[RMDB]
RNA sequence: GGGAACGACUCGAGUAGAGUCGAAAACCGGAGGGAUCCAAGAGACGGACGACUUUCCCCCAUUGGUUGGGAAAAGUCCCGGAACCAGGAAAUGGGAAAGAGACGGUAGAAAAGAGCGAGCCUCCCAGCACGUCGAAGUUCGCUUCGACGAAAAGAAACAACAACAACAAC
Reactivity to 2A3 in 0.01 (KOAc 150mM, MgCl2 10mM, bicine 150mM(pH8.5), 24C), signal-to-noise 5, nucleotides 027 to 129: c010c000g000g020a020g020g010g010a030u010c030c010a070a030g030a020g020a070c020g020g020a030c060g010a010c030u030u020u000c020c000c010c010c020a110u080u280g110g030u130u090g010g020g000a030a090a030a020g040u010c000c000c010g020g020a010a040c020c010a010g010g050a020a070a090u170g020g000g000a020a030a000g030a000g010a010c040g010g030u100a050g060a040a090a030a010g040a010g020c040g000a010g010c000c010u000c010c010c000a040g050c070a020
Reactivity to DMS in 0.01 (KOAc 150mM, MgCl2 10mM, bicine 150mM(pH8.5), 24C), signal-to-noise 9, nucleotides 027 to 129: c030c020g000g000a040g020g020g020a050u020c030c050a030a090g030a060g000a130c080g000g030a070c130g010a000c050u020u030u010c040c020c000c040c050a250u040u030g030g060u070u030g030g000g040a010a020a000a020g020u020c010c000c040g000g020a100a020c090c060a090g020g010a040a050a080u060g000g000g000a000a030a020g000a080g020a040c000g000g000u040a060g040a050a040a020a050g010a030g030c020g000a090g000c040c050u020c010c020c040a050g040c170a110
Structure probing data (2A3 and DMS) for a 170-nucleotide construct.
Values cover nucleotides 27 to 129.
The DMS profile rests on 48,815 reads.
The RNA was probed in 150 mM KOAc, 10 mM MgCl2 and 150 mM bicine (pH 8.5) at 24 C.
In probing experiments dimethyl sulfate is read out at A N1 and C N3, which are open when not base-paired.